[RMDB]
RNA sequence: GGGAACGACUCGAGUAGAGUCGAAAAGAUAUGGACCAUGAGAACGCUAACAGGUUCGUUGAUCUCGGAAACGAGGGAGAACCGUUAGCGACAUGGUCCUAAGUCAAAAGCGGGCUUCGGCCCGCAAGCCAAUAGAAUGGUUCGCCAUUCUAUUGGCAAAAGAAACAACAACAACAAC
Reactivity to DMS in 0.01 (KOAc 150mM, MgCl2 10mM, bicine 150mM(pH8.5), 24C), signal-to-noise 3, nucleotides 027 to 126: g000a040u000a300u010g020g000a020c000c000a000u000g000a160g020a100a120c010g030c000u000a010a010c000a160g030g000u010u000c000g000u000u010g020a020u030c000u000c010g000g010a130a080a230c000g010a000g000g000g000a010g000a000a000c000c000g000u000u000a000g030c000g020a030c000a010u000g010g000u010c000c010u000a000a060g000u010c010a120a070a120a120g000c020g000g000g000c000u000u020c200g000g000c000c000c000g010c000a030a030
Reactivity to 2A3 in 0.01 (KOAc 150mM, MgCl2 10mM, bicine 150mM(pH8.5), 24C), signal-to-noise 3, nucleotides 027 to 126: g030a010u050a070u130g000g000a000c010c010a000u030g020a050g090a300a080c020g010c010u010a040a030c120a300g010g040u000u010c000g050u200u020g000a000u000c020u010c010g040g000a080a050a040c000g000a010g000g010g000a020g000a000a000c010c000g010u000u010a000g000c010g000a010c000a000u000g000g000u000c000c000u000a010a010g020u000c010a000a020a050a110g010c000g000g000g000c020u100u140c290g060g000c050c060c010g000c010a000a010